[RMDB]
RNA sequence: GGGAACGACUCGAGUAGAGUCGAAAAGAGCAGUAUAAAACAGCUAACAUAGACUGUGAACAGUAUGACAAUAUGAGCUCAGCCGAAAGGGCAGUGAAAUUUCAAUGUUUAAGAGGUAAUUUGGGAGAUUUAAUCUAUGAUAGUGAUAUAAAGGACAUAAUAAAGUGAAUUUCGAUUCACUUUAUUAAAAAGAAACAACAACAACAAC
Reactivity to DMS in 0.01 (KOAc 150mM, MgCl2 10mM, bicine 150mM(pH8.5), 24C), signal-to-noise 4, nucleotides 027 to 156: g010a130g020c010a150g040u000a120u000a060a110a170a070c040a100g020c010u000a070a150c070a120u000a090g010a040c010u000g030u000g000a070a090c050a180g020u000a050u000g020a130c050a060a090u010a090u000g000a170g020c020u000c040a060g020c030c020g010a080a090a130g010g010g020c030a060g020u000g010a020a070a070u000u000u000c050a020a070u000g010u000u000u000a060a080g000a090g010g010u010a040a080u000u000u010g010g010g010a100g010a090u000u010u000a060a080u000c020u000a070u000g010a090u000a050g020u000g000a110u000a080u000a050a050a060g010g020a100c040a120
Reactivity to 2A3 in 0.01 (KOAc 150mM, MgCl2 10mM, bicine 150mM(pH8.5), 24C), signal-to-noise 5, nucleotides 027 to 156: g040a010g000c050a020g040u080a070u080a180a090a020a020c010a010g020c020u050a070a040c020a070u120a060g100a120c020u030g000u040g060a050a020c010a040g100u100a050u140g040a010c010a060a020u050a070u180g030a020g010c010u010c050a010g010c010c000g060a110a060a020g000g020g000c010a010g020u030g070a020a050a030u110u180u110c050a070a040u050g040u030u060u060a060a020g020a000g030g020u020a040a080u060u070u090g020g020g000a070g000a020u050u050u110a070a030u050c040u020a030u040g030a040u040a040g040u010g030a010u020a010u060a180a060a020g070g010a010c070a060
This 207-nucleotide RNA was probed chemically with DMS and 2A3. For DMS the reverse transcriptase was MarathonRT. Values cover nucleotides 27 to 156. The reactions ran in a buffer of 150 mM KOAc, 10 mM MgCl2 and 150 mM bicine (pH 8.5), at 24 C. The data come from the RNA Mapping Database (RMDB), library OK3TST.